[RMDB]
RNA sequence: GGGAACGACUCGAGUAGAGUCGAAAAGAUAUGGAUGUAUACCAGCUUGGACCUAUUGGUCGGAAACGACCACGGUAGCUAGCUGAUACAUCCUAAGUCAAAUCGGUAACACUUCGGUGUUACCGAAUCCACUGAUAGAGUUCGCUCUAUCAGUGGAAAAAGAAACAACAACAACAAC
Reactivity to DMS in 0.01 (KOAc 150mM, MgCl2 10mM, bicine 150mM(pH8.5), 24C), signal-to-noise 6, nucleotides 027 to 126: g000a020u000a300u000g000g010a010u010g000u000a020u000a160c300c020a000g010c000u000u000g010g010a020c060c010u000a160u000u010g000g010u000c000g000g010a090a070a210c000g010a000c000c000a070c300g000g010u000a020g020c020u000a010g010c010u000g000a040u000a010c010a010u000c000c000u000a010a050g030u000c040a080a130a180u000c010g000g010u000a000a000c000a010c000u000u020c160g010g020u000g000u000u000a000c000c010g010a010a030
Reactivity to 2A3 in 0.01 (KOAc 150mM, MgCl2 10mM, bicine 150mM(pH8.5), 24C), signal-to-noise 6, nucleotides 027 to 126: g020a010u060a040u150g000g000a000u010g030u020a020u020a220c170c020a000g010c030u090u230g150g010a010c000c010u060a210u270u280g010g000u010c030g000g020a090a080a030c020g010a000c020c000a020c050g020g020u030a060g290c120u060a010g010c010u030g010a000u000a000c000a000u000c000c000u000a110a000g040u020c030a010a050a220u040c010g000g000u000a010a000c010a000c010u060u120c300g140g000u010g010u010u000a000c000c000g000a000a010
Background: This 177-nucleotide RNA was probed chemically with DMS and 2A3.